[RMDB]
RNA sequence: GGGAACGACUCGAGUAGAGUCGAAAAGAGAGGAGUCAGAACACAACUGAAUGUGUUCUACACAUCGUGGAGAACACGAUGUGUAGCCUGACAUUCAGUUGUCAGGCAGACUCCUGGUAGUCAGAUAGCUAGUGCGUGAUUUCGAUCAUGCACUAGCAAAAGAAACAACAACAACAAC
Reactivity to DMS in 0.01 (KOAc 150mM, MgCl2 10mM, bicine 150mM(pH8.5), 24C), signal-to-noise 5, nucleotides 027 to 126: g000a150g000a030g010g000a010g010u010c010a060g000a150a190c180a010c010a020a060c110u020g000a070a090u000g020u000g010u010u010c000u000a010c000a000c000a010u000c010g000u000g000g000a230g010a120a150c000a010c000g000a000u000g000u010g000u000a000g010c170c070u010g000a010c000a010u000u020c220a060g000u000u000g000u010c010a000g000g000c190a080g000a010c000u000c000c000u000g000g020u010a040g010u000c060a060g010a100u030a130
Reactivity to 2A3 in 0.01 (KOAc 150mM, MgCl2 10mM, bicine 150mM(pH8.5), 24C), signal-to-noise 9, nucleotides 027 to 126: g160a000g010a010g000g000a000g000u010c030a010g030a090a010c010a000c000a050a060c070u180g050a070a050u030g010u000g020u050u000c000u000a000c000a000c000a000u000c010g000u010g020g080a240g040a190a050c000a000c000g000a000u000g000u000g000u000a000g000c010c020u030g030a000c000a010u050u060c040a120g210u040u010g000u010c000a000g000g020c040a000g000a000c000u000c000c000u000g000g010u040a070g060u070c080a020g020a160u110a050

Source information: An RNA of 177 nucleotides, treated with DMS and 2A3 and read out base by base. For 2A3 the reverse transcriptase was SuperScript II with manganese. For DMS the reverse transcriptase was MarathonRT.